Chemical mapping of a 207-nucleotide RNA with 2A3. For 2A3, 408 sequencing reads were counted. The RNA was probed in 150 mM KOAc, 10 mM MgCl2 and 150 mM bicine (pH 8.5) at 24 C. It was measured as part of the RMDB library OK3TST.
RNA sequence: GGGAACGACUCGAGUAGAGUCGAAAAUAUACUAGCAGAGGACACAGAGGAAAAGUCAAAUAAACAACAUCAUUUCAGAGAAUGGACACAGAAAGCUCAGUCAAUCAGAGACUAGCUCCUAACCCCAUCUUUCUCAUGGCAAAGGAUAUUCUGUCCAGUGGCGUAAUACUUUCGAGUAUUACGCCACAAAAGAAACAACAACAACAAC
Reactivity to 2A3 in 0.01 (KOAc 150mM, MgCl2 10mM, bicine 150mM(pH8.5), 24C), signal-to-noise 1, nucleotides 027 to 156: u210a010u120a020c020u000a050g000c010a010g030a040g090g000a000c010a030c010a060g080a030g030g120a020a010a010a010g070u070c100a010a000a120u180a090a050a010c040a020a040c010a050u050c000a000u130u250u200c050a010g070a000g090a140a000u090g000g010a030c060a000c000a080g120a070a050a000g000c000u050c080a000g050u020c040a050a120u080c080a110g080a090g000a260c010u000a020g050c000u020c000c070u030a070a080c010c010c000c000a020u040c030u010u140u000c060u000c000a010u090g090g050c000a000a100a000g040g000a010u050a010u140u000c100u040g050u000c000c000a000